[RMDB]
Structure probing data (2A3) for a 207-nucleotide construct.
Reactivities are rounded to 0.1 and cut off at 0 and 3.

RNA sequence: GGGAACGACUCGAGUAGAGUCGAAAAUGUCAGCCCGGGGAUGUCCCUGCCCCGGAUGCUGGCAUCGACUAAGGGACUUGCUAUCCAACCGCGUCAGCGGGGUUGGAUGGGACUUCUACCGCUGACUGGGCCCAUCAUCCGGAUGUGUUCGUCCUAGCUAUUCAAAUGCGUUCGCGCAUUUGAAUAGAAAAGAAACAACAACAACAAC
Reactivity to 2A3 in 0.01 (KOAc 150mM, MgCl2 10mM, bicine 150mM(pH8.5), 24C), signal-to-noise 4, nucleotides 027 to 156: u170g000u000c000a000g000c000c000c000g000g000g010g000a000u040g000u010c000c000c000u000g020c010c000c000c000g010g000a010u110g000c000u000g000g030c040a210u160c120g140a120c100u160a060a030g000g000g000a000c010u030u300g000c010u000a000u000c000c000a000a000c000c000g010c010g010u000c000a000g010c000g000g000g000g000u000u000g000g000a000u000g020g000g000a010c010u200u050c040u210a280c010c000g000c000u000g000a000c000u000g000g000g000c040c040c000a020u020c000a050u080c110c140g200g000a020u030g070u030g000u090u130c030g030u070c000c030u040a070g020
For 2A3, 4,242 sequencing reads were counted. 2A3 adducts were read by reverse transcription with SuperScript II with manganese. The reactions ran in a buffer of 150 mM KOAc, 10 mM MgCl2 and 150 mM bicine (pH 8.5), at 24 C.